About this RNA:
Structure probing data (2A3) for a 207-nucleotide construct. Conditions: 150 mM KOAc, 10 mM MgCl2 and 150 mM bicine (pH 8.5), 24 C. 2A3 adducts were read by reverse transcription with SuperScript II with manganese. It was measured as part of the RMDB library OK3TST.
[RMDB]
RNA sequence: GGGAACGACUCGAGUAGAGUCGAAAAAGUUUUGACUGUCUUUCUAGUUGUGCUUCAGUAUGGUCAUUUCCAAUAUAGCAAGCUGCUCUAUGCACUGAAAAUGCUAGUACUUUGGCUUUUAUGGCCAAUGGUGCUUGCGCUUUCAAUCUUUGACUGCCCAGUAGACUUAAUUCGUUAAGUCUACUGGAAAAGAAACAACAACAACAAC
Reactivity to 2A3 in 0.01 (KOAc 150mM, MgCl2 10mM, bicine 150mM(pH8.5), 24C), signal-to-noise 3, nucleotides 027 to 156: a000g050u090u080u090u120g060a060c040u010g030u050c040u000u120u010c070u130a060g030u070u050g000u040g010c040u050u130c040a060g050u150a130u170g020g000u050c040a070u050u070u010c030c010a030a080u130a020u070a130g060c060a130a020g030c040u030g020c020u050c010u020a060u140g000c060a030c070u020g000a010a010a000a010u020g000c000u010a000g000u000a010c010u000u000u000g010g010c000u080u050u070u250a230u300g040g000c020c000a010a020u080g030g000u010g000c010u000u000g000c000g000c000u010u010u000c020a040a060u020c030u070u080u100g050a060c030u050g030c010